[RMDB]
RNA sequence: GGGAACGACUCGAGUAGAGUCGAAAAGAUAUGGAUGAUGGGAGGUGCGUUCGGAAACGAACGACCCACCGCGAAACCAUAUCCUAAGUCAAACUAGGAAAUCUCGCUUCGGCGAGAUUUCCUAGAACUUUCAUUUUCUGUUCGCAGAAAAUGAAAGAAAAGAAACAACAACAACAAC
Reactivity to DMS in 0.01 (KOAc 150mM, MgCl2 10mM, bicine 150mM(pH8.5), 24C), signal-to-noise 2, nucleotides 027 to 126: g010a010u000a020u000g000g000a060u000g030a230u010g000g020g030a210g030g010u000g000c000g000u000u000c010g000g000a110a080a250c010g020a020a000c030g020a080c040c000c090a100c000c000g010c080g000a230a140a090c010c000a010u010a010u000c000c030u000a060a070g000u020c110a150a090a170c010u010a000g000g000a030a020a000u020c020u000c000g030c000u000u040c210g030g000c020g060a020g000a000u000u000u000c000c010u000a010g010a020a100